[RMDB]
RNA sequence: GGGAACGACUCGAGUAGAGUCGAAAAUUCAGAUGCUGAGUAGGAUAUUCCCAGCAGAGGGAACAGCCCCAUCAAAGGCACAGUUGCCUGACGGAGCCAGGCUGAGAAAGGCCUUCAAUCCAGGAGCAAAGAGGCCAAGUGGAAGCAACUGCAGUGAUAUAGCUGAUAGUUUCGACUAUCAGCUAUAAAAAGAAACAACAACAACAAC
Reactivity to DMS in 0.01 (KOAc 150mM, MgCl2 10mM, bicine 150mM(pH8.5), 24C), signal-to-noise 3, nucleotides 027 to 156: u000u000c050a130g020a160u010g040c020u010g010a100g030u000a120g010g020a140u000a150u020u000c000c000c020a160g010c090a120g010a130g000g010g020a070a070c070a070g020c000c010c010c030a080u010c050a090a140a090g040g030c010a100c080a130g000u000u000g020c020c020u000g000a050c020g030g000a110g030c040c060a040g020g020c000u010g010a100g020a080a100a110g010g000c010c000u000u000c040a020a120u010c070c050a090g000g000a090g010c060a080a070a150g010a070g000g000c050c010a040a090g000u020g000g000a080a100g040c040a030a050c070u000g000c040a070g010u000g010a150
Reactivity to 2A3 in 0.01 (KOAc 150mM, MgCl2 10mM, bicine 150mM(pH8.5), 24C), signal-to-noise 4, nucleotides 027 to 156: u090u040c030a030g060a160u060g040c000u060g040a050g070u150a080g030g090a060u060a110u140u070c020c050c010a020g010c040a020g050a110g020g020g020a060a020c020a010g050c010c010c010c000a050u060c080a090a110a030g010g010c020a020c020a110g120u130u080g030c000c010u010g020a030c060g050g000a020g020c030c020a020g020g000c010u020g020a030g080a140a080a010g030g000c000c000u050u060c020a000a040u030c020c040a040g030g000a020g040c060a050a050a080g080a050g020g000c010c020a050a000g020u020g030g020a050a020g030c030a030a030c030u070g010c030a020g040u030g120a050

This 207-nucleotide RNA was probed chemically with DMS and 2A3. The reactions ran in a buffer of 150 mM KOAc, 10 mM MgCl2 and 150 mM bicine (pH 8.5), at 24 C. For DMS, 5,053 sequencing reads were counted. The data come from the RNA Mapping Database (RMDB), library OK3TST.